[RMDB]
RNA sequence: GGGAACGACUCGAGUAGAGUCGAAAAGGAGUGGAAGGCGCUGCCCGGGGGGAACCGGAUUUACCUACGGGAAUCCCUGGGUUCCUCUGAUGUCCAGUCCCUCUCCCGUCCGAGUGAAGGGAGACUCGCUACAGUACUACUUCGGUAGUACUGUAGCAAAAGAAACAACAACAACAAC
Reactivity to 2A3 in 0.01 (KOAc 150mM, MgCl2 10mM, bicine 150mM(pH8.5), 24C), signal-to-noise 2, nucleotides 027 to 126: g000g000a030g040u080g020g040a210a070g020g000c060g030c250u110g010c000c030c040g010g000g000g010g010g000a000a000c000c000g040g020a010u090u080u160a100c010c020u000a030c030g010g030g020a020a030u010c020c010c000u000g000g000g000u030u010c000c000u000c010u050g080a080u120g080u020c010c000a000g060u000c000c000c000u030c010u010c010c010c000g030u020c030c020g230a140g060u300g030a010a020g000g020g010a000g000a010c050u000c160
Reactivity to DMS in 0.01 (KOAc 150mM, MgCl2 10mM, bicine 150mM(pH8.5), 24C), signal-to-noise 2, nucleotides 027 to 126: g000g020a090g020u000g000g000a040a050g000g030c300g000c080u010g000c000c000c000g080g020g010g000g000g000a300a140c010c010g020g000a110u030u010u040a020c270c200u000a030c070g000g000g000a050a180u030c000c000c030u010g020g010g000u000u000c010c010u000c020u040g000a070u000g000u000c020c000a060g020u000c020c000c000u000c020u020c000c000c000g000u000c000c030g030a170g010u010g000a010a050g010g000g000a040g010a010c160u010c140